[RMDB]
RNA sequence: GGGAACGACUCGAGUAGAGUCGAAAAUUCCCGAUUCCGUCCAUCCCCACCCCCGGGUGUCCCCCCAGGAAUGGCGGGACCCCACUCGACAGGGUCCGCGUACCAUCCUUUCUUACCUGAUGGCCGGCCGGUAAACCGUUCGCGGUUUACAAAAGAAACAACAACAACAAC
Reactivity to DMS in 0.01 (KOAc 150mM, MgCl2 10mM, bicine 150mM(pH8.5), 24C), signal-to-noise 9, nucleotides 027 to 129: u030u010c030c040c010g020a160u060u040c050c000g000u020c040c020a080u010c000c030c020c040a290c050c020c000c030c000g040g010g040u000g010u040c020c020c010c030c020c030a030g010g010a090a040u030g010g020c190g000g000g000a000c040c020c000c060a060c050u060c150g060a110c180a050g000g000g000u020c030c000g030c040g000u070a090c010c010a000u030c040c070u000u080u050c090u050u060a140c060c050u010g000a080u000g010g040c000c000g000g000c200c060g000
Reactivity to 2A3 in 0.01 (KOAc 150mM, MgCl2 10mM, bicine 150mM(pH8.5), 24C), signal-to-noise 9, nucleotides 027 to 129: u020u000c000c000c020g000a090u130u040c000c000g040u030c020c010a040u020c000c010c010c020a090c020c000c000c000c000g020g000g010u080g040u030c010c010c000c000c010c000a000g030g050a160a070u020g010g010c010g000g000g000a000c000c000c000c000a040c040u150c050g100a050c070a060g010g000g020u030c000c000g170c020g020u020a060c010c000a020u040c000c000u060u180u100c050u060u080a170c030c050u070g000a020u020g020g000c000c000g020g010c010c010g010

Structure probing data (DMS and 2A3) for a 170-nucleotide construct. DMS (dimethyl sulfate) methylates the pairing face of unpaired adenines and cytosines. The DMS profile rests on 45,630 reads. For 2A3 the reverse transcriptase was SuperScript II with manganese.